[RMDB]
RNA sequence: GGGAACGACUCGAGUAGAGUCGAAAAGAAGGAGAUGAAAGCGACUUUAGAAUCGGCUAACUGAGCAGACAGAUGCAGACGGCAAGUAUCGUCGCCAGAGAUACAGUCGCAAAUAGCCGGAGGAGAAGAUUUAGUGGAGGUUCGCCUCCACUAAAUCAAAAGAAACAACAACAACAAC
Reactivity to 2A3 in 0.01 (KOAc 150mM, MgCl2 10mM, bicine 150mM(pH8.5), 24C), signal-to-noise 4, nucleotides 027 to 126: g070a010a020g110g060a030g000a010u100g090a100a050a000g010c010g010a010c020u040u090u130a100g040a090a070u060c030g030g000c040u010a090a020c020u030g010a050g060c060a080g030a040c030a070g020a020u030g030c030a010g050a160c040g050g060c050a050a090g010u040a030u020c010g000u000c010g010c010c010a010g030a010g000a010u060a040c020a010g010u000c010g010c010a020a120a030u100a020g000c000c000g040g010a050g060g030a110g000a100a080
Reactivity to DMS in 0.01 (KOAc 150mM, MgCl2 10mM, bicine 150mM(pH8.5), 24C), signal-to-noise 3, nucleotides 027 to 126: g000a060a120g010g010a070g000a120u000g000a040a100a130g010c030g000a050c040u000u010u010a090g000a170a160u030c010g000g030c100u020a110a200c070u000g000a090g050c020a120g000a080c050a100g000a110u000g000c060a090g020a110c050g000g020c060a040a150g000u000a050u000c020g020u000c040g000c040c020a030g020a150g000a100u010a030c110a060g020u010c010g010c060a000a060a050u010a100g000c000c020g000g000a200g000g010a080g030a060a070